[RMDB]
The record gives the reactivity of an RNA of 177 nucleotides to 2A3 and DMS. High DMS reactivity at an A or C suggests that its Watson-Crick edge is free. DMS adducts were read by reverse transcription with MarathonRT. Values are in units of 0.01, from 0 to 300, in steps of 10. The reactions ran in a buffer of 150 mM KOAc, 10 mM MgCl2 and 150 mM bicine (pH 8.5), at 24 C. It was measured as part of the RMDB library RFM100. For 2A3, 3,587 sequencing reads were counted.
RNA sequence: GGGAACGACUCGAGUAGAGUCGAAAAGCUUCCUUUUCCUGCCUCUGAGCUCGGGAGGGGUUUCCCGCCUCGCAGCCCCCGCCCCUGGACUUGCUUCUCCUCCUCCCUCUGCGUGUGGAGGGAGCCAUUCAAGGCGAAAAUUCGUUUUCGCCUUGAAAAAAGAAACAACAACAACAAC
Reactivity to 2A3 in 0.01 (KOAc 150mM, MgCl2 10mM, bicine 150mM(pH8.5), 24C), signal-to-noise 3, nucleotides 027 to 126: g030c030u080u080c010c000u030u020u060u050c000c000u020g050c010c000u130c070u120g050a040g050c010u030c050g030g000g000a050g000g030g020g000u010u080u020c000c000c000g020c000c010u030c030g070c030a040g000c000c000c000c000c010g020c000c000c000c010u020g010g020a050c030u020u060g010c010u050u060c020u000c020c000u000c000c000u010c000c020c000u000c000u030g100c100g130u160g070u140g040g000a000g000g000g000a000g000c000c000a040
Reactivity to DMS in 0.01 (KOAc 150mM, MgCl2 10mM, bicine 150mM(pH8.5), 24C), signal-to-noise 2, nucleotides 027 to 126: g000c200u020u020c020c000u030u010u030u040c010c040u000g000c040c020u010c020u000g010a100g040c050u000c140g010g020g030a080g000g000g010g030u000u020u030c020c010c010g010c060c040u010c030g010c080a140g000c030c000c030c050c080g000c040c000c010c000u010g000g000a030c060u000u020g010c050u020u000c030u010c020c020u010c130c000u010c000c010c000u010c020u000g000c110g040u010g030u000g030g010a020g010g000g010a000g000c070c120a150